[RMDB]
The record gives the reactivity of an RNA of 177 nucleotides to 2A3 and DMS. Conditions: 150 mM KOAc, 10 mM MgCl2 and 150 mM bicine (pH 8.5), 24 C. For DMS, 3,612 sequencing reads were counted. Values cover nucleotides 27 to 126.
RNA sequence: GGGAACGACUCGAGUAGAGUCGAAAAGGUGCUAUGACUCCCAGGACCUCAAGUAUGGUGAGGACAGAGUGUCAUGUGAGGCUGUGUCAGAUCAGUCUGUGUCCUGGGACCACCAGAGCAUGUGCCAACUUGAGUUGUGGUUCGCCACAACUCAAGUAAAAGAAACAACAACAACAAC
Reactivity to 2A3 in 0.01 (KOAc 150mM, MgCl2 10mM, bicine 150mM(pH8.5), 24C), signal-to-noise 5, nucleotides 027 to 126: g060g000u000g000c020u020a000u020g010a010c010u000c010c000c000a010g010g000a010c020c040u070c080a120a110g090u140a110u110g080g110u070g060a120g050g030a030c000a000g160a030g000u150g050u090c070a090u300g250u300g160a090g050g000c000u060g010u020g010u200c020a010g000a190u020c000a020g120u000c000u030g010u020g000u010c000c000u000g010g000g010a010c000c000a020c000c000a000g010a000g010c010a010u040g050u160g200c010c010a040
Reactivity to DMS in 0.01 (KOAc 150mM, MgCl2 10mM, bicine 150mM(pH8.5), 24C), signal-to-noise 2, nucleotides 027 to 126: g040g010u000g010c030u010a010u000g000a000c220u000c000c000c010a010g020g000a040c000c180u010c090a150a040g020u060a160u010g010g010u000g000a140g000g000a050c000a020g020a000g000u000g010u030c020a240u070g020u020g020a040g010g000c000u000g000u040g000u000c040a060g060a030u010c000a030g000u040c040u010g000u010g020u000c050c000u020g000g010g010a010c010c130a160c090c000a000g000a050g040c020a000u000g020u030g000c010c010a150